[RMDB]
RNA sequence: GGGAACGACUCGAGUAGAGUCGAAAAGAAGAGACCGCCACUAGGAGUCAGGGUUCAGACACGAUCCAAGAGAACACGGUGACACUGACUGUGGAGCGGAAGAGGCAAAGAGAGUGGCGGAAGAGAAAUCAGGUAAUGCAUUCGUGCAUUACCUGAUAAAAGAAACAACAACAACAAC
Reactivity to DMS in 0.01 (KOAc 150mM, MgCl2 10mM, bicine 150mM(pH8.5), 24C), signal-to-noise 4, nucleotides 027 to 126: g000a100a120g000a100g020a120c000c010g010c000c010a000c020u000a100g000g000a060g020u010c000a010g010g000g020u030u010c170a030g000a140c140a070c050g010a120u020c080c030a140a180g000a240g020a030a060c060a070c070g010g030u030g000a050c070a080c050u000g000a010c000u000g030u020g000g010a130g000c050g000g000a090a070g000a120g000g000c070a050a050a120g020a100g000a020g000u000g010g000c000g000g010a030a040g010a110g000a050a110
Reactivity to 2A3 in 0.01 (KOAc 150mM, MgCl2 10mM, bicine 150mM(pH8.5), 24C), signal-to-noise 6, nucleotides 027 to 126: g140a040a020g060a000g060a050c000c000g000c000c010a010c010u040a050g090g040a030g060u010c010a000g030g000g000u100u090c030a010g070a120c030a010c140g010a020u000c020c020a200a030g130a010g020a100a030c090a010c080g030g000u020g010a010c020a000c060u020g020a010c010u020g050u160g110g050a090g020c070g040g020a040a010g040a020g010g000c030a050a060a010g110a020g010a010g020u010g000g010c000g010g010a020a000g020a010g000a020a130